This 177-nucleotide RNA was probed chemically with DMS and 2A3. The 2A3 profile rests on 5,603 reads.
RNA sequence: GGGAACGACUCGAGUAGAGUCGAAAAGUGGCACCAUUCGCCCCCAGGGAUUUGCUGCUAUCAGGGUGACAUUAUGCUCCAACACUGUGCAGAAAUACGAGCUGGCACUCGUGGUGGACGUGGAGGGGUGGUAAUACAUGUUCGCAUGUAUUACCACAAAAGAAACAACAACAACAAC
Reactivity to DMS in 0.01 (KOAc 150mM, MgCl2 10mM, bicine 150mM(pH8.5), 24C), signal-to-noise 6, nucleotides 027 to 126: g020u010g010g020c030a060c090c060a140u010u010c100g000c030c010c020c030c020a110g010g000g020a110u000u010u000g010c040u000g010c040u000a070u000c070a070g000g010g000u000g010a070c090a080u000u000a070u010g020c100u000c010c020a040a100c050a050c030u000g000u000g000c030a050g010a050a040a080u010a110c180g010a070g010c030u000g010g000c080a070c020u000c100g030u010g010g010u000g000g000a050c070g010u010g000g000a160g010g010g010
Reactivity to 2A3 in 0.01 (KOAc 150mM, MgCl2 10mM, bicine 150mM(pH8.5), 24C), signal-to-noise 4, nucleotides 027 to 126: g060u080g020g010c020a010c060c050a160u170u140c120g070c010c000c000c000c010a030g030g010g020a070u040u050u120g030c020u020g000c010u030a030u140c020a010g060g010g000u040g020a010c000a010u090u120a060u220g040c020u030c010c010a020a000c030a010c040u050g010u040g000c010a010g070a080a080a010u200a060c070g010a040g050c010u060g070g000c020a010c050u040c040g020u000g010g020u040g020g010a030c060g010u060g000g050a080g010g010g020
For 2A3 the reverse transcriptase was SuperScript II with manganese. Conditions: 150 mM KOAc, 10 mM MgCl2 and 150 mM bicine (pH 8.5), 24 C. It was measured as part of the RMDB library OK2TRN.